[RMDB]
RNA sequence: GGGAACGACUCGAGUAGAGUCGAAAAGUUGAAAAAAGAUCGUCAAGUCAACGUGAAGUCAACGAAUUGUUACAACGACGUAGUAGCUGGUCUACUAUUGAUUUAGAAAGAUUUACUAAACUAUACCGUGAUGAUUAUUCAAACAAAGAAGAAGAAAUAAAUCCACGAUAUUCGUAUCGUGGAUUUAAAAAGAAACAACAACAACAAC
Reactivity to 2A3 in 0.01 (KOAc 150mM, MgCl2 10mM, bicine 150mM(pH8.5), 24C), signal-to-noise 3, nucleotides 027 to 156: g010u030u020g080a110a020a010a000a010a000g030a040u030c010g030u020c040a090a020g050u020c020a030a020c070g010u030g050a040a030g060u070c050a040a000c030g040a030a130u110u180g060u090u050a040c060a130a010c070g060a010c020g000u010a000g000u000a010g000c050u130g140g020u090c000u010a020c010u030a000u010u050g030a040u050u040u130a080g030a050a070a000g050a020u160u110u080a050c040u110a020a120a010c000u020a000u060a090c040c030g020u030g040a050u010g030a000u020u060a050u110u130c050a040a090a070c050a080a100a010g090a040a000g090a010a000g020a040a110a070
Reactivity to DMS in 0.01 (KOAc 150mM, MgCl2 10mM, bicine 150mM(pH8.5), 24C), signal-to-noise 3, nucleotides 027 to 156: g010u000u010g000a030a030a060a100a110a080g000a120u000c020g000u010c040a070a170g010u020c070a010a060c040g010u010g000a100a140g000u000c020a050a090c070g030a040a090u000u020g020u000u000a090c070a150a030c030g010a050c040g010u000a040g020u000a020g040c040u010g010g000u010c010u000a220c000u000a020u010u010g020a220u000u030u000a040g000a090a050a090g010a050u000u000u000a060c020u010a030a040a100c030u000a040u000a050c030c010g010u000g000a160u000g000a060u000u000a060u000u040c040a090a040a120c080a010a050a070g010a060a130g000a100a090g010a070a060a130